[RMDB]
This 177-nucleotide RNA was probed chemically with DMS.
It was measured as part of the RMDB library TTRDEL.
The DMS profile rests on 2,022 reads.
The RNA was probed in 150 mM KOAc, 10 mM MgCl2 and 150 mM bicine (pH 8.5) at 24 C.
RNA sequence: GGGAACGACUCGAGUAGAGUCGAAAAGAUAUGGAUUCAAGCAACAGCCCAGGGUCGGAAACGACCCAUGGGACAUGCUUGGUCCUAAGUCAAAACAGGGCCGUAUUCUUCGGAAUACGGCCCUGAACUAAGACUAACACUUCGGUGUUAGUCUUAGAAAAGAAACAACAACAACAAC
Reactivity to DMS in 0.01 (KOAc 150mM, MgCl2 10mM, bicine 150mM(pH8.5), 24C), signal-to-noise 2, nucleotides 027 to 126: g000a000u000a280u000g020g010a030u000u010c000a010a000g010c010a020a090c260a160g010c000c000c000a030g000g000g030u000c000g010g010a080a080a070c010g000a010c000c010c010a000u000g010g020g010a040c090a050u000g000c000u000u000g000g000u000c000c000u020a040a110g000u000c010a120a100a110a260c010a010g000g010g040c010c010g000u000a000u000u000c010u000u000c190g020g000a020a010u000a000c000g010g000c020c000c000u000g000a000a100